[RMDB]
RNA sequence: GGGAACGACUCGAGUAGAGUCGAAAAGAUAUGGAGGCAAGACAUGCGAGUGACUCGGAAACGAGUCCUCGCAACAGCUUGCUCCUAAGUCAAAACGCGACUGUUCCCUUCGGGGAACAGUCGCGAACUAGCAUAUUACGUUCGCGUAAUAUGCUAGAAAAGAAACAACAACAACAAC
Reactivity to DMS in 0.01 (KOAc 150mM, MgCl2 10mM, bicine 150mM(pH8.5), 24C), signal-to-noise 4, nucleotides 027 to 126: g000a040u000a300u000g000g000a040g010g020c000a010a000g020a050c070a260u000g010c000g000a010g030u010g020a020c010u000c000g000g000a070a090a170c000g010a020g010u000c000c000u000c010g010c000a000a020c170a160g000c010u000u000g000c000u000c000c010u010a050a150g000u010c030a110a060a100a140c030g020c010g000a010c000u000g020u000u000c000c000c010u000u010c170g020g010g010g000a020a000c000a000g000u000c000g000c000g000a000a040
Reactivity to 2A3 in 0.01 (KOAc 150mM, MgCl2 10mM, bicine 150mM(pH8.5), 24C), signal-to-noise 3, nucleotides 027 to 126: g020a020u090a060u180g040g020a040g090g300c010a010a010g010a120c060a140u100g030c010g010a000g020u300g020a010c000u010c020g030g020a080a060a050c010g000a000g000u000c000c020u000c010g000c000a000a000c000a010g010c000u000u010g000c020u020c000c000u050a180a010g060u030c030a000a010a080a140c030g030c020g030a010c010u010g020u040u040c000c010c000u020u040c300g050g000g000g000a000a030c010a000g000u020c020g020c010g020a000a000